The record gives the reactivity of an RNA of 177 nucleotides to 2A3 and DMS. 2A3 is a SHAPE reagent: it acylates the 2'-hydroxyl of flexible nucleotides of all four kinds. The data come from the RNA Mapping Database (RMDB), library OK2TRN. The reactions ran in a buffer of 150 mM KOAc, 10 mM MgCl2 and 150 mM bicine (pH 8.5), at 24 C.
[RMDB]
RNA sequence: GGGAACGACUCGAGUAGAGUCGAAAAUAAGGCUAAUAUAUUUAUUACGGUUCAUAUCCAAAUAAUCAGCCCACCACUGCAUCAUUAAACGCCGCUCAUCCAAAUGCUCGGAGGUAUGGAUAUAUGCCAAAAUCGGAAUAUUCGUAUUCCGAUUUUGAAAAGAAACAACAACAACAAC
Reactivity to 2A3 in 0.01 (KOAc 150mM, MgCl2 10mM, bicine 150mM(pH8.5), 24C), signal-to-noise 1, nucleotides 027 to 126: u080a010a010g000g020c000u010a100a000u130a180u000a140u300u110u040a220u180u070a060c030g030g000u010u100c030a010u080a020u060c030c000a000a010a060u130a070a080u060c080a020g000c010c000c000a010c020c000a030c030u040g000c010a070u000c010a010u120u170a080a130a030c020g110c050c000g010c040u010c040a070u040c010c020a180a110a060u140g020c020u020c010g040g060a060g000g000u000a020u020g000g020a010u040a000u020a000u180g060c000
Reactivity to DMS in 0.01 (KOAc 150mM, MgCl2 10mM, bicine 150mM(pH8.5), 24C), signal-to-noise 3, nucleotides 027 to 126: u010a090a140g000g010c030u000a050a070u010a100u010a090u020u010u000a060u030u000a110c100g000g020u010u000c090a060u000a040u010c020c020a070a090a070u010a070a060u010c070a090g010c030c010c030a080c040c050a090c030u000g000c040a040u000c070a050u010u000a050a070a130c150g030c050c060g020c050u000c070a060u010c050c030a060a120a100u010g010c040u000c050g010g000a080g020g000u000a050u010g010g010a080u010a030u000a040u000g020c110